[RMDB]
RNA sequence: GGGAACGACUCGAGUAGAGUCGAAAACACCGCGAGGUAGACGUCGAUGGUGGUGACGAUGAGGAUCAUCAGCACCGGGCCGAUGAUGAUACCCCAGGGGCCGAACAUGGUGAUACCGGCGAACACCACACGUAGUGUCGUUCGCGACACUACGUGUAAAAGAAACAACAACAACAAC
Reactivity to DMS in 0.01 (KOAc 150mM, MgCl2 10mM, bicine 150mM(pH8.5), 24C), signal-to-noise 5, nucleotides 027 to 126: c090a120c040c010g010c130g010a050g010g020u000a050g010a150c070g010u000c020g000a110u010g010g030u000g010g010u020g020a090c060g000a050u000g000a170g010g010a090u000c000a010u000c000a050g000c030a070c040c010g010g000g020c080c030g010a080u010g020a060u000g010a190u000a070c020c000c010c020a130g010g000g010g030c040c010g000a070a100c140a090u010g000g010u000g010a100u010a090c070c020g000g000c040g000a060a070c050a060c030c040
Reactivity to 2A3 in 0.01 (KOAc 150mM, MgCl2 10mM, bicine 150mM(pH8.5), 24C), signal-to-noise 3, nucleotides 027 to 126: c070a030c020c020g000c040g020a050g060g000u060a040g020a130c020g020u010c010g050a090u140g040g040u050g050g070u010g000a040c040g010a040u090g030a050g220g070a100u020c010a000u010c010a020g050c020a020c030c000g010g080g000c020c040g010a010u120g010a010u040g020a020u100a100c010c000c000c000a020g020g000g020g000c000c000g080a080a060c060a140u080g030g000u020g020a030u060a160c070c000g000g000c010g010a010a000c020a010c000c000